[RMDB]
The data come from the RNA Mapping Database (RMDB), library TTRDES. This 177-nucleotide RNA was probed chemically with 2A3 and DMS. As a SHAPE reagent, 2A3 marks flexible, mostly unpaired nucleotides at the ribose 2'-OH. The RNA was probed in 150 mM KOAc, 10 mM MgCl2 and 150 mM bicine (pH 8.5) at 24 C. DMS adducts were read by reverse transcription with MarathonRT.

RNA sequence: GGGAACGACUCGAGUAGAGUCGAAAAGAUAUGGACGAGAUAGGACAUGAUCUUCAAUCGGAAACGAUUGAGAUCAACAGCCUACCUCGUCCUAAGUCAAACUUAGCUAGGUUCGCCUAGCUAAGAAUCAAUAAGCCCUGUUCGCAGGGCUUAUUGAAAAAGAAACAACAACAACAAC
Reactivity to 2A3 in 0.01 (KOAc 150mM, MgCl2 10mM, bicine 150mM(pH8.5), 24C), signal-to-noise 2, nucleotides 027 to 126: g000a000u020a010u050g000g010a000c010g000a000g000a020u000a010g010g010a060c240a300u270g000a000u000c050u300u160c110a050a010u000c000g010g050a020a000a020c000g010a010u010u000g000a010g000a000u010c030a010a060c130a030g000c010c000u000a000c010c000u000c000g000u000c000c000u000a000a000g000u000c010a010a010a070c010u000u010a000g010c020u000a000g020g040u040u050c300g140c100c000u000a010g010c000u000a000a010g000a010a060
Reactivity to DMS in 0.01 (KOAc 150mM, MgCl2 10mM, bicine 150mM(pH8.5), 24C), signal-to-noise 3, nucleotides 027 to 126: g010a010u000a120u000g000g000a010c000g000a000g000a030u000a000g010g010a060c170a160u000g000a010u000c010u000u010c010a010a010u010c000g020g000a030a030a060c000g000a020u000u000g000a010g010a020u010c000a080a070c210a220g000c000c000u010a010c010c000u000c010g000u000c000c000u000a000a070g000u000c010a140a130a260c010u000u000a010g000c000u000a010g010g000u000u020c290g020c000c000u010a010g010c000u000a000a000g020a120a120